[RMDB]
Description
This 177-nucleotide RNA was probed chemically with 2A3. Source: RMDB library RFM100, as collected in RNAgym. Values cover nucleotides 27 to 126. For 2A3 the reverse transcriptase was SuperScript II with manganese.
RNA sequence: GGGAACGACUCGAGUAGAGUCGAAAAAUGCCUUACGCCUGGUUGACCAGACUUUAGAGGUCGCUGUUCUGAGCUUAACGUCUGUUUUAACUGAAACGCCGCAUUCUACACUACAACGCUAAGGCGAGCCAGGUGUCGUUUUCGAACGACACCUGGCAAAAGAAACAACAACAACAAC
Reactivity to 2A3 in 0.01 (KOAc 150mM, MgCl2 10mM, bicine 150mM(pH8.5), 24C), signal-to-noise 2, nucleotides 027 to 126: a000u020g000c000c030u000u020a100c010g000c000c030u060g030g000u010u170g060a060c060c020a000g030a070c000u100u170u150a180g060a000g050g110u000c080g050c000u000g070u160u070c100u030g050a110g040c020u090u110a090a060c100g040u000c000u000g030u000u080u000u030a080a000c060u080g030a010a010a010c010g040c110c000g000c000a000u010u030c000u120a000c000a070c050u250a070c130a110a000c010g000c080u010a090a000g030g000c000g000a000

Conditions: 150 mM KOAc, 10 mM MgCl2 and 150 mM bicine (pH 8.5), 24 C.